[RMDB]
RNA sequence: GGGAACGACUCGAGUAGAGUCGAAAAGAUAUGGACAGAACUACAGCGAAUUGUGCGUUGAAAUCGGAAACGAUGGAGCACAAGGAGCUGCUGUCCUAAGUCAAACGAUGUGCUUCGGCACAUCGAAGGACCUAUCUAUGUUCGCAUAGAUAGGUCCAAAAGAAACAACAACAACAAC
Reactivity to DMS in 0.01 (KOAc 150mM, MgCl2 10mM, bicine 150mM(pH8.5), 24C), signal-to-noise 4, nucleotides 027 to 126: g000a040u010a300u010g000g010a020c000a020g030a060a030c120u010a300c020a010g000c000g000a300a200u010u000g030u000g020c000g020u000u000g010a050a100a010u010c000g010g000a090a060a200c010g000a010u010g000g000a110g030c000a010c000a000a010g000g010a300g000c010u000g000c010u010g000u000c000c000u000a020a080g000u000c030a110a080a210c030g000a000u000g020u000g000c000u000u000c160g020g010c000a030c010a000u020c000g010a070a090
Reactivity to 2A3 in 0.01 (KOAc 150mM, MgCl2 10mM, bicine 150mM(pH8.5), 24C), signal-to-noise 4, nucleotides 027 to 126: g010a020u060a030u120g010g000a000c000a000g030a110a060c140u250a100c280a000g010c010g010a020a030u010u000g000u010g010c000g200u300u100g030a040a040a010u010c010g010g030a030a060a040c010g020a010u020g020g040a020g000c000a000c010a010a000g000g000a010g000c000u000g010c000u010g000u000c000c000u000a150a010g040u010c050a080a020a110c030g000a000u010g010u000g010c010u040u100c300g140g000c000a000c000a000u000c000g000a020a060